RNA sequence: GGGAACGACUCGAGUAGAGUCGAAAAAGGCACACUUCUAUAUCAUUUUACAAACAGAGUGACAGAGAGGUUCACCUCUGAGCUCUGUUAGAGAACGCAGAGCUUACAGGUGAAGCGUUGUAAGAACUGCGUUCUUAGUUCUGUGAAUGCUGUGCCACCGUAGUACCCCAUUCGUGGGGUACUACGGAAAAGAAACAACAACAACAAC
Reactivity to 2A3 in 0.01 (KOAc 150mM, MgCl2 10mM, bicine 150mM(pH8.5), 24C), signal-to-noise 2, nucleotides 027 to 156: a000g020g000c000a010c010a000c050u060u060c060u100a200u100a060u210c030a070u030u090u180u300a140c080a010a000a000c000a000g010a000g050u020g180a160c000a000g020a010g000a030g090g100u270u210c180a120c070c010u020c010u000g020a000g040c000u030c010u010g000u020u000a000g000a000g000a000a010c020g000c010a000g020a020g010c000u000u000a020c000a030g070g040u100g230a090a020g130c030g120u100u090g000u010a000a000g000a050a020c000u000g000c020g010u000u000c010u010u000a020g010u020u020c010u020g090u020g070a010a000u050g050c080u000g010u000g000c000c000a010

Structure probing data (2A3) for a 207-nucleotide construct. Reactivities are rounded to 0.1 and cut off at 0 and 3.